Conditions: 150 mM KOAc, 10 mM MgCl2 and 150 mM bicine (pH 8.5), 24 C. An RNA of 177 nucleotides, treated with DMS and 2A3 and read out base by base. Reactivities are rounded to 0.1 and cut off at 0 and 3. For 2A3 the reverse transcriptase was SuperScript II with manganese.
[RMDB]
RNA sequence: GGGAACGACUCGAGUAGAGUCGAAAACGACAUGACGUCCAUGCGCGACUAGGUCUAGUGCGUACGUGAUCGCUCGAUCGUACGCUAGUAGUACACAUGCAUGACUCGUCUACUGAUCUAUGUCAUGUAGGAGGGCGUAGUUCGCUACGCCCUCCUAAAAAGAAACAACAACAACAAC
Reactivity to DMS in 0.01 (KOAc 150mM, MgCl2 10mM, bicine 150mM(pH8.5), 24C), signal-to-noise 1, nucleotides 027 to 126: c050g000a070c050a140u010g000a030c010g020u010c040c020a040u000g010c010g050c090g050a090c140u000a040g000g000u000c030u000a070g010u000g000c000g030u070a000c000g040u000g000a020u000c050g000c210u000c130g030a010u000c030g010u000a020c010g010c000u030a020g010u030a010g000u000a030c030a160c100a070u000g030c010a090u000g000a050c050u010c130g020u000c010u000a150c110u010g000a060u000c060u000a080u010g000u000c040a110u000g000
Reactivity to 2A3 in 0.01 (KOAc 150mM, MgCl2 10mM, bicine 150mM(pH8.5), 24C), signal-to-noise 1, nucleotides 027 to 126: c050g030a000c040a080u080g000a000c020g070u000c000c040a100u120g000c060g030c050g080a030c050u020a040g030g160u010c060u010a070g160u010g070c000g000u020a030c030g020u090g040a030u110c080g020c230u200c170g030a050u030c010g000u000a000c000g020c000u000a030g000u010a010g060u020a000c050a000c030a050u150g040c030a010u030g050a200c030u000c060g040u000c020u000a060c070u020g070a000u000c060u110a060u180g030u070c020a010u130g030